[RMDB]
The record gives the reactivity of an RNA of 177 nucleotides to 2A3 and DMS. For 2A3 the reverse transcriptase was SuperScript II with manganese. In probing experiments dimethyl sulfate is read out at A N1 and C N3, which are open when not base-paired. Source: RMDB library TTRDES, as collected in RNAgym. The RNA was probed in 150 mM KOAc, 10 mM MgCl2 and 150 mM bicine (pH 8.5) at 24 C.

RNA sequence: GGGAACGACUCGAGUAGAGUCGAAAAGAUAUGGAGGUCAUGAGGGAGAGCACGGUUCGGAAACGAACCUAUGCUCAUCGAUCUCAUACCUCCUAAGUCAAAUCUUCAUCACUUCGGUGAUGAAGAACUAGGAGAAUGUCUUCGGACAUUCUCCUAGAAAAGAAACAACAACAACAAC
Reactivity to 2A3 in 0.01 (KOAc 150mM, MgCl2 10mM, bicine 150mM(pH8.5), 24C), signal-to-noise 2, nucleotides 027 to 126: g010a000u010a020u080g000g000a010g050g000u060c160a010u070g000a000g030g000g020a080g000a000g010c020a000c020g020g000u000u000c000g000g020a020a010a010c000g010a000a000c000c010u020a080u120g000c000u000c000a020u300c010g000a020u020c010u000c010a000u030a010c000c000u000c000c000u000a010a000g010u010c000a040a000a300u030c010u010u000c000a000u000c000a010c020u070u110c300g240g000u010g000a000u010g000a000a000g000a000a050
Reactivity to DMS in 0.01 (KOAc 150mM, MgCl2 10mM, bicine 150mM(pH8.5), 24C), signal-to-noise 2, nucleotides 027 to 126: g010a050u010a030u000g010g010a020g000g020u000c280a010u000g000a020g000g000g040a030g000a000g020c020a020c300g000g020u000u000c000g010g000a010a030a030c000g010a010a010c010c000u000a040u000g000c000u000c000a280u010c210g010a000u010c000u020c000a020u000a010c000c000u000c000c000u000a000a050g000u000c020a120a120a120u000c000u010u000c000a000u010c000a000c010u000u010c220g020g010u000g000a010u000g000a000a000g020a010a110